[RMDB]
RNA sequence: GGGAACGACUCGAGUAGAGUCGAAAAUGAAUAUGAGCAGGCUGUUUGUCAGAAACAUCGGUGAUCCAGUAACAUCAUCAAUUGCUGAUCUCAAGAGAAUGAUUCUCGCAUCACUAAUGCCUGAAGACUAUGAGACUUUCUUCGGAAAGUCUCAUAGAAAAGAAACAACAACAACAAC
Reactivity to DMS in 0.01 (KOAc 150mM, MgCl2 10mM, bicine 150mM(pH8.5), 24C), signal-to-noise 6, nucleotides 027 to 126: u040g020a120a090u060a090u030g000a090g020c050a050g000g020c020u010g000u010u000u010g040u010c230a050g000a090a010a050c020a030u000c070g000g000u000g000a000u000c160c050a040g000u010a060a050c140a040u000c100a060u010c090a070a160u010u010g010c060u000g000a060u010c130u020c050a040a040g000a130g010a030a050u000g000a090u000u040c010u000c160g030c130a010u000c090a020c090u030a060a020u000g000c030c000u010g000a090a070g000a240
Reactivity to 2A3 in 0.01 (KOAc 150mM, MgCl2 10mM, bicine 150mM(pH8.5), 24C), signal-to-noise 7, nucleotides 027 to 126: u150g030a050a030u210a110u210g050a050g050c020a010g000g000c020u040g070u090u060u070g090u100c010a020g090a030a050a010c010a030u030c020g010g020u050g000a010u020c080c010a000g000u050a010a060c030a100u130c000a020u030c030a070a150u070u040g000c010u040g020a060u020c020u010c060a100a080g050a030g110a190a090u090g030a130u190u070c010u010c030g000c010a010u050c000a010c070u110a100a040u120g010c000c000u010g030a040a010g030a010